[RMDB]
RNA sequence: GGGAACGACUCGAGUAGAGUCGAAAAUCCAGUUCCUGGCACGCAUGCCACACCUGGAGAAGGUGUACGCCCUCGGGGAUCUGCACCAGAUCGACUUCACCGACUUUCAAUGUACUGGCUUCCGGGAGCAUAUAUUACUGUUCGCAGUAAUAUAUGCAAAAGAAACAACAACAACAAC
Reactivity to DMS in 0.01 (KOAc 150mM, MgCl2 10mM, bicine 150mM(pH8.5), 24C), signal-to-noise 9, nucleotides 027 to 126: u010c010c010a170g010u000u000c050c050u010g020g020c050a070c190g010c140a090u010g010c040c060a060c050a040c080c010u000g000g020a120g010a150a060g010g010u000g010u000a090c200g000c030c020c030u000c070g010g000g010g000a050u000c040u010g010c080a070c070c060a080g000a070u000c040g010a080c050u000u010c060a070c050c030g000a090c080u000u000u010c080a070a100u000g010u000a080c070u000g010g010c060u000u000c020c020g010g010g010a200
Reactivity to 2A3 in 0.01 (KOAc 150mM, MgCl2 10mM, bicine 150mM(pH8.5), 24C), signal-to-noise 9, nucleotides 027 to 126: u010c000c000a000g020u030u030c010c010u010g020g000c030a020c110g140c080a090u170g020c010c000a030c010a010c010c010u030g040g040a160g060a080a030g020g000u010g020u020a030c080g040c010c000c020u060c050g080g000g020g020a060u030c020u060g020c030a050c030c030a030g010a080u040c020g060a050c020u070u040c060a040c040c010g050a050c040u080u160u060c130a100a120u110g030u090a060c030u030g040g020c000u050u020c010c010g020g010g010a050
Structure probing data (DMS and 2A3) for a 177-nucleotide construct. 2A3 adducts were read by reverse transcription with SuperScript II with manganese. DMS adducts were read by reverse transcription with MarathonRT. Source: RMDB library OK2TST, as collected in RNAgym. 2A3 is a SHAPE reagent: it acylates the 2'-hydroxyl of flexible nucleotides of all four kinds. The RNA was probed in 150 mM KOAc, 10 mM MgCl2 and 150 mM bicine (pH 8.5) at 24 C.